Description
The record gives the reactivity of an RNA of 177 nucleotides to 2A3 and DMS. Reactivities are given for positions 27 through 126. Conditions: 150 mM KOAc, 10 mM MgCl2 and 150 mM bicine (pH 8.5), 24 C.
[RMDB]
RNA sequence: GGGAACGACUCGAGUAGAGUCGAAAACAAAGUCACUAGCAGCACAAAUACACGCAUUCUCCACGUUGUCUGUAGACUCUCGAAAUGGCAGCAGACAUUUUGUUUGUGUAAAAGGGACGCUGGUACGCGCUAAAAUUAGUUUCGACUAAUUUUAGCGAAAAGAAACAACAACAACAAC
Reactivity to 2A3 in 0.01 (KOAc 150mM, MgCl2 10mM, bicine 150mM(pH8.5), 24C), signal-to-noise 9, nucleotides 027 to 126: c060a010a100a010g060u070c060a020c050u020a010g000c040a010g020c040a020c010a070a090a030u100a030c050a010c040g040c020a070u090u040c050u030c060c030a060c090g060u050u040g010u000c020u010g060u040a070g060a180c030u030c020u030c130g110a100a090a080u140g040g000c040a030g000c000a000g040a020c020a030u060u090u050u120g060u020u040u080g020u000g020u050a060a080a030a030g070g020g030a030c050g000c010u020g010g020u060a040c060g000
Reactivity to DMS in 0.01 (KOAc 150mM, MgCl2 10mM, bicine 150mM(pH8.5), 24C), signal-to-noise 8, nucleotides 027 to 126: c080a070a070a100g000u010c090a050c040u010a040g010c060a150g020c080a060c030a030a080a100u030a050c130a060c040g000c060a090u010u010c030u000c020c040a110c130g000u000u000g000u000c030u010g010u010a080g000a130c070u010c070u010c130g030a060a090a070u010g000g020c060a190g000c010a030g000a040c030a050u010u010u010u010g010u010u010u010g020u000g010u010a030a050a100a080g010g010g000a090c070g000c010u000g000g010u000a060c130g000
Annotation:
The 2A3 profile rests on 45,994 reads.